[RMDB]
Chemical mapping of a 207-nucleotide RNA with 2A3 and DMS. The DMS profile rests on 3,389 reads. DMS adducts were read by reverse transcription with MarathonRT.

RNA sequence: GGGAACGACUCGAGUAGAGUCGAAAAGGUAUCUAAUCUGCAUGUGUAAAUAACCAGCUCUAAGGAGGAUGUGAUAUACCACCCAGUGUGGGGACUUCUGGGUAUGGCAGGGGUUCUUACACUGAAGCAUGCACUGGAGUCACUUGGAGGCUUAUUACUCCGUAAUAUACUUCGGUAUAUUACGGAGAAAAGAAACAACAACAACAAC
Reactivity to 2A3 in 0.01 (KOAc 150mM, MgCl2 10mM, bicine 150mM(pH8.5), 24C), signal-to-noise 3, nucleotides 027 to 156: g020g000u060a040u040c060u140a120a030u030c030u060g010c040a020u020g070u020g070u200a030a130a090u120a120a100c020c020a030g040c010u040c030u070a090a130g100g000a020g020g020a060u030g030u060g080a040u030a000u010a200c020c020a020c030c040c020a010g000u000g000u000g000g010g020g020a010c000u010u010c000u030g140g000g070u240a150u120g140g000c010a000g000g030g000g000u000u000c000u000u030a000c000a000c000u000g000a020a000g030c000a010u030g000c000a000c020u020g020g040a040g040u030c020a030c130u030u070g040g040a030g030g030c010u070u060a060u090u150a190
Reactivity to DMS in 0.01 (KOAc 150mM, MgCl2 10mM, bicine 150mM(pH8.5), 24C), signal-to-noise 1, nucleotides 027 to 156: g000g040u010a090u010c040u000a100a080u000c010u000g040c030a090u000g010u000g010u000a030a090a160u010a120a120c060c030a160g020c030u010c030u000a070a100g030g030a100g020g010a080u000g000u000g010a110u010a120u000a100c060c000a170c010c000c020a070g030u010g050u010g020g000g020g030a010c010u000u000c010u000g020g070g050u000a080u000g030g000c010a040g000g010g000g000u010u030c040u000u000a040c010a060c010u010g020a020a130g000c020a020u000g030c020a080c020u010g000g010a120g000u000c050a080c080u010u000g010g000a100g020g030c030u000u010a030u000u000a220
Source: RMDB library OK3TST, as collected in RNAgym.